[RMDB]
RNA sequence: GGGAACGACUCGAGUAGAGUCGAAAAUCUGCUCUAAUGAGCAGAUCCUAUGAGAGCAUAGGAAACUCCAAUUAACAUUGCAAAGGAGCUAUACACCUUAUAACUGGUGUAUAGAAAACAUCGUGGGCCAAUUUAAGUUUGCGUAUGAGGCAAUGAAGGGGUGUGGCGAGUUCGCUCGCUGUGUCUCAAAAGAAACAACAACAACAAC
Reactivity to DMS in 0.01 (KOAc 150mM, MgCl2 10mM, bicine 150mM(pH8.5), 24C), signal-to-noise 7, nucleotides 027 to 156: u000c000u010g000c000u000c000u000a160a180u010g010a020g040c010a010g000a020u000c010c010u000a040u000g010a230g030a170g030c030a060u000a070g020g010a140a110a100c020u000c010c020a100a140u000u000a100a190c040a050u000u000g000c010a100a130a180g010g010a160g010c020u000a010u000a010c010a010c000c000u000u010a130u010a130a200c250u000g010g030u000g010u000a010u000a020g000a040a070a080a110c040a050u000c020g010u000g010g000g010c000c010a070a150u010u010u010a060a060g010u000u000u000g030c010g010u000a060u000g020a180g000g060c020a020a040u010g000a100a130
Reactivity to 2A3 in 0.01 (KOAc 150mM, MgCl2 10mM, bicine 150mM(pH8.5), 24C), signal-to-noise 4, nucleotides 027 to 156: u000c000u000g010c000u000c020u090a220a140u230g000a000g000c000a000g000a000u010c000c000u010a030u010g050a100g010a020g100c010a010u010a010g010g000a020a020a020c020u000c010c000a000a010u080u030a030a030c010a020u010u050g000c010a000a050a050g030g000a030g000c000u000a000u000a000c000a000c000c000u060u090a100u050a160a090c090u050g000g000u000g000u000a000u000a000g000a000a020a000a010c020a020u030c010g020u020g010g000g000c010c010a040a030u050u090u140a150a050g020u010u040u030g010c000g000u050a020u050g030a020g050g000c010a010a010u030g030a090a020
Background:
Structure probing data (DMS and 2A3) for a 207-nucleotide construct. The reactions ran in a buffer of 150 mM KOAc, 10 mM MgCl2 and 150 mM bicine (pH 8.5), at 24 C. For DMS, 22,869 sequencing reads were counted.